[RMDB]
RNA sequence: GGGAACGACUCGAGUAGAGUCGAAAACCGUGCACUCUGGAACAAGCUUGAGAAACUGGGUCUAGUACCAGAUAUGACGGCAUGCCGCAUAAUGUGUCAUGGAAAGAUUUAUCGGUGCACGAUGGGCAAUAUUAAUGAAAUUCGUUUCAUUAAUAUUAAAAGAAACAACAACAACAAC
Reactivity to 2A3 in 0.01 (KOAc 150mM, MgCl2 10mM, bicine 150mM(pH8.5), 24C), signal-to-noise 9, nucleotides 027 to 126: c010c000g000u000g000c000a000c000u080c020u060g020g020a060a010c020a040a030g030c010u040u050g030a030g020a130a050a010c010u020g010g020g030u020c020u040a020g020u030a050c010c010a000g010a020u050a010u050g060a020c010g010g000c000a000u020g020c010c020g030c020a030u050a090a090u170g020u000g000u010c000a010u010g020g040a040a030a000g030a010u030u050u030a080u050c010g000g000u000g000c000a000c010g010a040u040g030g010g000c000
Reactivity to DMS in 0.01 (KOAc 150mM, MgCl2 10mM, bicine 150mM(pH8.5), 24C), signal-to-noise 9, nucleotides 027 to 126: c030c000g020u000g010c010a010c010u000c040u000g010g010a100a050c030a090a090g010c030u000u010g000a150g000a090a120a150c050u010g000g000g010u020c050u010a090g000u020a090c050c040a040g000a090u020a020u010g010a130c130g000g000c010a030u000g000c040c020g010c030a120u020a070a080u030g020u000g000u000c010a030u000g000g010a070a060a070g010a120u020u010u020a060u010c050g000g010u000g000c010a010c010g010a090u020g000g010g010c130